[RMDB]
RNA sequence: GGGAACGACUCGAGUAGAGUCGAAAAUUUGAGAAGCUGAGGUGAGCUCAGGAGGUCAAGGCUGCAGUAAGCCAUGAUUGCACCACUGCACUCUAGCCUGGGCAACAGAGUGAGACCCUGUGUCAAAGUCACUAUACUUGUUCGCAAGUAUAGUGACAAAAGAAACAACAACAACAAC
Reactivity to 2A3 in 0.01 (KOAc 150mM, MgCl2 10mM, bicine 150mM(pH8.5), 24C), signal-to-noise 3, nucleotides 027 to 126: u070u020u090g130a120g010a120a000g000c040u050g020a060g080g120u080g040a040g030c010u010c040a010g000g050a040g010g100u110c090a050a010g020g000c020u040g000c020a020g040u080a050a020g020c060c020a070u140g100a150u010u230g000c040a020c070c000a020c040u030g010c010a020c030u000c030u030a010g000c000c020u000g000g030g010c010a020a010c010a030g080a020g030u040g010a020g020a020c020c010c020u030g050u010g020u100c030a040a100a000
Reactivity to DMS in 0.01 (KOAc 150mM, MgCl2 10mM, bicine 150mM(pH8.5), 24C), signal-to-noise 5, nucleotides 027 to 126: u010u010u000g010a120g030a140a160g010c020u000g010a080g010g010u000g010a150g020c040u000c020a030g020g000a100g010g020u010c090a100a050g000g040c120u000g000c020a070g010u000a090a070g000c020c070a100u010g000a110u000u000g000c040a060c080c090a050c040u000g010c040a050c080u000c030u000a100g030c020c010u000g000g020g000c040a130a080c050a040g010a070g020u000g010a100g010a110c040c040c020u010g010u010g000u000c070a040a060a140

Conditions: 150 mM KOAc, 10 mM MgCl2 and 150 mM bicine (pH 8.5), 24 C. Chemical mapping of a 177-nucleotide RNA with 2A3 and DMS. DMS adducts were read by reverse transcription with MarathonRT. 2A3 adducts were read by reverse transcription with SuperScript II with manganese. For DMS, 4,697 sequencing reads were counted.